Chemical mapping of a 177-nucleotide RNA with DMS and 2A3. Reactivities are rounded to 0.1 and cut off at 0 and 3. 2A3 is a SHAPE reagent: it acylates the 2'-hydroxyl of flexible nucleotides of all four kinds. For DMS the reverse transcriptase was MarathonRT.

RNA sequence: GGGAACGACUCGAGUAGAGUCGAAAACGAUCUUCUUUAACCCGCGCGACACCGCGGCGGUGAUGCUGGGCGCGAUCGUGGUCGCCGGCGUCGCGACACUGAUCCCCCUGUUGCGCCGCGGCGACGACUUUUUAACGCUAUUCGUAGCGUUAAAAAGAAAAGAAACAACAACAACAAC
Reactivity to DMS in 0.01 (KOAc 150mM, MgCl2 10mM, bicine 150mM(pH8.5), 24C), signal-to-noise 7, nucleotides 027 to 126: c110g000a080u010c080u000u010c060u000u000u000a130a150c030c010c020g020c100g010c030g020a120c050a040c030c010g010c040g000g010c020g010g030u000g000a040u010g010c070u000g020g000g030c130g030c140g010a020u000c020g010u000g000g010u000c010g020c010c040g020g010c140g010u010c090g010c000g000a020c000a020c060u010g010a070u000c000c010c000c030c030u000g000u000u000g000c010g010c010c000g020c000g000g000c010g010a050c020g010a230
Reactivity to 2A3 in 0.01 (KOAc 150mM, MgCl2 10mM, bicine 150mM(pH8.5), 24C), signal-to-noise 7, nucleotides 027 to 126: c030g060a080u030c040u130u030c020u040u220u070a100a130c010c000c010g020c020g000c020g070a060c010a010c080c000g010c020g040g000c040g010g090u120g040a050u120g010c060u060g000g010g020c130g030c120g050a010u000c020g020u040g070g100u030c000g000c010c020g200g110c090g080u170c060g000c010g010a000c020a010c040u120g040a060u020c010c000c000c000c000u000g030u030u040g040c000g000c010c000g000c010g000g010c000g010a010c010g000a010